Chemical mapping of a 177-nucleotide RNA with DMS.

RNA sequence: GGGAACGACUCGAGUAGAGUCGAAAAGCUGGUCCGGUUUGGCCCCAGCGAACACUUGACGAACGGUUAGUCCCGUCUUGUGGAUUAGGACGUUCUAGGUCCGGUCUGACCCCUAGUUCGUCCGAAAAGUGCUGCUAUCAUUCGUGAUAGCAGCACUAAAAGAAACAACAACAACAAC
Reactivity to DMS in 0.01 (KOAc 150mM, MgCl2 10mM, bicine 150mM(pH8.5), 24C), signal-to-noise 2, nucleotides 027 to 126: g010c000u010g000g010u010c040c060g030g010u040u070u030g000g000c130c120c000c000a020g000c040g030a130a080c000a000c030u000u010g030a010c070g000a150a100c100g000g050u040u020a090g000u010c110c020c000g000u010c030u000u000g000u030g000g000a260u000u040a150g020g000a050c000g030u000u000c000u010a000g010g030u000c130c140g010g010u050c150u020g000a050c000c000c000c010u010a000g000u000u000c000g010u020c000c020g000a030a090a050
DMS adducts were read by reverse transcription with MarathonRT. Values cover nucleotides 27 to 126. It was measured as part of the RMDB library OK1LIB. DMS (dimethyl sulfate) methylates the pairing face of unpaired adenines and cytosines.